[RMDB]
Record summary: Chemical mapping of a 177-nucleotide RNA with DMS and 2A3. Values cover nucleotides 27 to 126. The DMS profile rests on 1,256 reads. The RNA was probed in 150 mM KOAc, 10 mM MgCl2 and 150 mM bicine (pH 8.5) at 24 C. The 2A3 profile rests on 3,550 reads. For DMS the reverse transcriptase was MarathonRT.
RNA sequence: GGGAACGACUCGAGUAGAGUCGAAAAGAUAUGGAGAUAACAGACAUGACGAGUGUCGGAAACGACAUAACGUCAACAGCUGUAUCUCCUAAGUCAAAAGUUGUUAACCCUUCGGGGUUAACAACAAGUAGUAAUCACCGUUCGCGGUGAUUACUACAAAAGAAACAACAACAACAAC
Reactivity to DMS in 0.01 (KOAc 150mM, MgCl2 10mM, bicine 150mM(pH8.5), 24C), signal-to-noise 2, nucleotides 027 to 126: g020a010u000a290u010g000g000a020g020a010u010a100a070c010a000g000a060c040a280u010g010a000c010g030a300g010u010g020u000c000g000g000a070a030a080c000g000a010c000a000u000a070a120c020g020u010c000a090a110c230a140g020c000u000g010u000a020u000c000u000c000c000u020a000a130g020u020c010a100a080a140a190g000u000u000g000u000u000a010a000c020c010c000u000u020c190g050g000g010g010u000u000a010a000c000a020a010c010a050a140
Reactivity to 2A3 in 0.01 (KOAc 150mM, MgCl2 10mM, bicine 150mM(pH8.5), 24C), signal-to-noise 2, nucleotides 027 to 126: g040a000u030a000u080g020g000a030g000a000u110a300a080c000a000g160a040c150a300u300g000a010c060g000a010g020u020g000u010c000g000g000a020a010a010c000g000a000c000a030u270a290a100c020g000u040c160a060a050c040a120g040c000u000g000u000a000u000c010u000c000c000u010a040a010g020u000c000a010a080a170a150g000u000u010g000u020u000a000a000c010c010c000u010u060c300g040g070g000g020u010u000a010a000c000a000a000c000a000a000